[RMDB]
RNA sequence: GGGAACGACUCGAGUAGAGUCGAAAAGAUAUGGACCUUAGGGAGCUGACAUUCGGAAACGAAUGGUAGCUUUGAUCUGGGUCCUAAGUCAAAGCAAUCGUACUUGGUUCGCCAAGUACGAUUGCAACAAACGAGGAGUGUUCGCACUCCUCGUUUGAAAAGAAACAACAACAACAAC
Reactivity to 2A3 in 0.01 (KOAc 150mM, MgCl2 10mM, bicine 150mM(pH8.5), 24C), signal-to-noise 1, nucleotides 027 to 126: g000a000u020a040u110g000g000a020c000c000u120u300a050g000g000g000a010g000c010u010g050a040c010a010u010u000c000g000g030a060a060a060c010g000a000a010u010g000g010u020a000g000c000u130u070u020g020a040u030c020u030g040g000g030u000c000c000u010a070a020g040u010c040a130a070a040g000c010a000a000u010c000g010u000a000c000u010u030g070g050u080u170c300g020c130c000a010a030g000u000a000c000g010a000u000u000g000c000a020a010
Reactivity to DMS in 0.01 (KOAc 150mM, MgCl2 10mM, bicine 150mM(pH8.5), 24C), signal-to-noise 2, nucleotides 027 to 126: g000a010u020a300u020g000g010a000c000c000u000u010a010g010g000g010a000g000c000u000g020a050c000a030u000u010c020g030g010a030a060a100c000g000a020a010u000g000g010u000a020g010c000u000u010u010g000a080u010c040u000g020g000g000u000c000c000u000a000a060g020u010c030a100a120a150g000c000a020a000u000c000g010u000a010c000u000u000g000g010u000u000c260g030c010c000a000a020g010u010a000c000g000a000u000u000g010c010a060a050

Structure probing data (2A3 and DMS) for a 177-nucleotide construct. 2A3 adducts were read by reverse transcription with SuperScript II with manganese. DMS adducts were read by reverse transcription with MarathonRT. The RNA was probed in 150 mM KOAc, 10 mM MgCl2 and 150 mM bicine (pH 8.5) at 24 C.